[RMDB]
RNA sequence: GGGAACGACUCGAGUAGAGUCGAAAAUUAAUCAAUUUUCCUCACCUUUUUAAGAUGGGGGCUUUUAGAUGGAAUUCACGAAGGUAAAGGAGAAUGGACCGCUCUUCAUAAAAUUGAUCAGAUAGCCCAAUUUUAGCCUAUUCGUAGGCUAAAAUUGAAAAGAAACAACAACAACAAC
Reactivity to 2A3 in 0.01 (KOAc 150mM, MgCl2 10mM, bicine 150mM(pH8.5), 24C), signal-to-noise 1, nucleotides 027 to 126: u050u080a010a000u030c030a000a040u020u060u050u000c000c000u030c060a090c000c000u120u240u230u220u300a170a000g020a030u060g110g000g010g010g040c000u120u110u170u140a100g050a090u060g060g020a110a110u090u270c000a010c100g060a000a030g080g010u070a020a070a000g000g030a010g010a020a020u040g040g050a000c000c060g110c040u030c040u100u000c000a010u090a030a090a110a110u010u030g000a010u000c040a020g020a060u070a060g020c000c000
Reactivity to DMS in 0.01 (KOAc 150mM, MgCl2 10mM, bicine 150mM(pH8.5), 24C), signal-to-noise 1, nucleotides 027 to 126: u000u010a130a060u000c020a030a010u000u000u000u010c010c010u000c040a020c010c000u000u010u020u000u000a040a070g030a030u000g020g010g020g010g010c110u000u010u010u010a100g010a110u000g000g010a100a170u020u000c020a040c130g000a040a060g000g020u000a060a110a100g020g000a030g020a040a070u010g010g010a070c110c090g000c070u000c020u000u000c060a010u010a030a010a020a040u000u010g010a040u000c050a070g010a090u000a080g010c020c040